[RMDB]
RNA sequence: GGGAACGACUCGAGUAGAGUCGAAAAGAUAUGGAAAGGAACUACUCGUGAAGUAGCGAAGAACCUGAUGAUAAAUCGGAAACGAUUUAUCAUCAGGGGAGCUAUGGAGGCGAGCCUUUCCUAAGUCGGACUAGGUAUAGUUCGCUAUACCUAGUCCAAAAGAAACAACAACAACAAC
Reactivity to 2A3 in 0.01 (KOAc 150mM, MgCl2 10mM, bicine 150mM(pH8.5), 24C), signal-to-noise 2, nucleotides 027 to 126: g020a040u170a070u270g000g020a030a000a010g020g000a060a040c050u240a060c010u300c010g080u100g060a060a010g010u020a010g010c010g190a300a010g010a090a070c000c000u000g010a000u000g000a000u020a000a010a010u000c010g040g020a100a040a000c000g000a000u020u000u000a010u000c000a000u000c000a010g000g000g030g020a010g000c010u010a010u030g000g030a100g300g270c020g000a010g000c010c000u020u000u000c010c000u010a080a010g050u070c100
Reactivity to DMS in 0.01 (KOAc 150mM, MgCl2 10mM, bicine 150mM(pH8.5), 24C), signal-to-noise 3, nucleotides 027 to 126: g020a090u000a300u010g000g000a020a000a010g030g010a080a020c010u020a300c000u000c030g040u000g000a300a300g000u000a000g000c000g000a140a120g020a170a210c000c000u000g030a030u000g000a010u000a000a000a000u000c010g000g010a120a090a300c010g030a010u000u010u000a010u000c000a010u000c000a000g000g000g000g000a030g020c010u000a010u000g000g000a300g020g030c020g000a010g020c020c000u000u000u000c000c010u000a030a050g000u000c110
Structure probing data (2A3 and DMS) for a 177-nucleotide construct. Conditions: 150 mM KOAc, 10 mM MgCl2 and 150 mM bicine (pH 8.5), 24 C. It was measured as part of the RMDB library TTRINS. For DMS the reverse transcriptase was MarathonRT.